[RMDB]
RNA sequence: GGGAACGACUCGAGUAGAGUCGAAAAGGUCAUGGUGAAAAUCUUCAAGCCUCCAUGAGUUGCAGAAACAAGAGAGGCAUGUGUGCAUCUAUCUGGAUGCUCAGAAAUACAGGUUUUCAACUAGUGGAGCUUCAGUAAAUAUUGAUGAAUUGGACAAGCUCACGUGAUUAUUCGUAAUCACGUGAGCAAAAGAAACAACAACAACAAC
Reactivity to 2A3 in 0.01 (KOAc 150mM, MgCl2 10mM, bicine 150mM(pH8.5), 24C), signal-to-noise 1, nucleotides 027 to 156: g050g030u000c000a040u000g000g000u040g050a020a020a020a020u000c020u120u110c110a120a070g010c000c020u050c010c010a090u140g080a090g030u140u040g030c070a040g100a230a050a000c050a070a000g130a040g000a000g120g010c030a030u060g040u000g010u000g040c000a000u000c040u080a120u030c160u200g030g000a000u040g000c020u020c030a020g120a000a120a010u200a050c130a000g030g000u000u000u000u020c010a100a000c000u090a000g260u100g070g000a040g040c070u060u060c030a020g000u080a040a100a190u240a090u240u090g020a080u180g040a100a170u190u120g050g050a060c010a050a020
Structure probing data (2A3) for a 207-nucleotide construct. The RNA was probed in 150 mM KOAc, 10 mM MgCl2 and 150 mM bicine (pH 8.5) at 24 C. For 2A3 the reverse transcriptase was SuperScript II with manganese. It was measured as part of the RMDB library OK3TST.